[RMDB]
RNA sequence: GGGAACGACUCGAGUAGAGUCGAAAAAAUAUCGAGGCUAGGCGAAGCCGUAGGCACAUUACUUGUGAACUCGUUCAACGCGGUUCUACCCGUGAUACAAAGGGUAUUCGAGGUGCUGCAAGCAACCUUCGCUAACCUCGGGCCAGUGUUCACACAGACGGACAUAACCUUUCGAGGUUAUGUCCGUAAAAGAAACAACAACAACAAC
Reactivity to 2A3 in 0.01 (KOAc 150mM, MgCl2 10mM, bicine 150mM(pH8.5), 24C), signal-to-noise 1, nucleotides 027 to 156: a000a000u260a040u080c030g000a000g020g000c080u120a130g050g000c000g000a000a000g000c040c040g000u050a030g130g000c080a000c000a020u160u300a190c030u110u090g020u000g150a040a080c030u070c300g090u280u140c130a120a070c130g000c010g060g000u130u000c050u050a040c030c000c030g140u180g130a120u170a170c150a030a110a080g040g040g070u000a080u040u240c020g010a070g000g000u010g000c110u060g060c080a250a000g000c010a070a070c000c000u000u000c000g020c030u010a010a010c000c000u020c000g000g000g000c100c000a050g000u030g000u180u030c110a020c020a000c000a010g000